This 177-nucleotide RNA was probed chemically with DMS and 2A3. Conditions: 150 mM KOAc, 10 mM MgCl2 and 150 mM bicine (pH 8.5), 24 C. It was measured as part of the RMDB library M2PK50. For DMS, 1,294 sequencing reads were counted.

[RMDB]
RNA sequence: GGGAACGACUCGAGUAGAGUCGAAAAGUGCACGACUUCGGUCGUGCACAAAUAAAGGCUGUCGAGUGCGUACGGCACAGUCAUACGCUGACGCCACGACAAAAAGUAACGUCUUCGGACGUUACAACGUCCGUGUAACGUUCGCGUUACACGGACGAAAAGAAACAACAACAACAAC
Reactivity to DMS in 0.01 (KOAc 150mM, MgCl2 10mM, bicine 150mM(pH8.5), 24C), signal-to-noise 2, nucleotides 027 to 126: g000u000g020c030a020c010g020a020c000u010u020c210g020g000u000c000g020u000g000c000a000c000a000a040a060u000a130a100a060g000g020c040u020g020u000c020g020a190g020u010g010c010g000u000a090c080g020g000c020a060c110a030g000u000c180a080u000a100c050g000c010u020g000a010c050g000c010c000a230c010g010a020c060a030a070a120a090a110g000u000a010a000c000g000u000c000u000u010c190g000g000a000c000g020u000u000a000c020a070a080
Reactivity to 2A3 in 0.01 (KOAc 150mM, MgCl2 10mM, bicine 150mM(pH8.5), 24C), signal-to-noise 3, nucleotides 027 to 126: g030u000g000c020a000c020g010a020c040u040u090c250g010g020u010c020g030u000g000c010a000c000a000a010a000u010a000a030a010g090g020c080u050g020u040c020g050a060g090u200g060c010g010u080a230c020g040g010c010a040c050a220g150u150c060a110u070a210c100g000c020u040g000a010c020g030c000c030a030c010g040a020c050a010a150a000a010a010g010u010a000a000c020g000u000c010u020u050c160g090g000a000c000g000u010u000a000c000a000a010
Reactivities are given for positions 27 through 126. The 2A3 profile rests on 3,087 reads.